[RMDB]
RNA sequence: GGGAACGACUCGAGUAGAGUCGAAAACUUGCGCACGAGGAUGCUGUCAUGAUCGGUGCCCUCGAAAUGUUCAUGGUCGAGAUUGCCGAAAUAAGGGAAGGCCACAUCGGCAACGGCAUCAUGUGCACCUGCACUAAAUCUUCGGAUUUAGUGCAGGAAAAGAAACAACAACAACAAC
Reactivity to DMS in 0.01 (KOAc 150mM, MgCl2 10mM, bicine 150mM(pH8.5), 24C), signal-to-noise 3, nucleotides 027 to 126: c060u000u010g020c140g030c000a030c030g010a180g010g010a030u000g010c010u010g020u010c050a210u010g000a030u000c050g030g000u000g000c110c020c000u000c020g010a010a040a050u000g040u010u000c150a060u020g000g020u000c070g000a060g000a110u010u000g010c020c000g000a020a060a130u010a180a080g000g000g000a130a080g010g010c090c020a070c200a090u000c060g000g000c110a110a130c020g020g000c030a000u000c010a080u000g020u000g010c010a210
Reactivity to 2A3 in 0.01 (KOAc 150mM, MgCl2 10mM, bicine 150mM(pH8.5), 24C), signal-to-noise 4, nucleotides 027 to 126: c010u040u160g010c040g010c040a010c020g050a070g230g020a010u020g000c010u010g050u070c040a070u090g040a090u060c010g050g000u030g010c000c010c000u010c000g030a050a070a050u190g030u150u130c060a070u180g080g020u040c040g010a030g030a170u050u140g010c020c020g050a070a060a030u160a090a070g090g000g030a060a060g160g010c040c000a040c020a080u040c030g000g000c000a010a020c000g010g000c020a010u000c010a010u070g000u000g000c010a050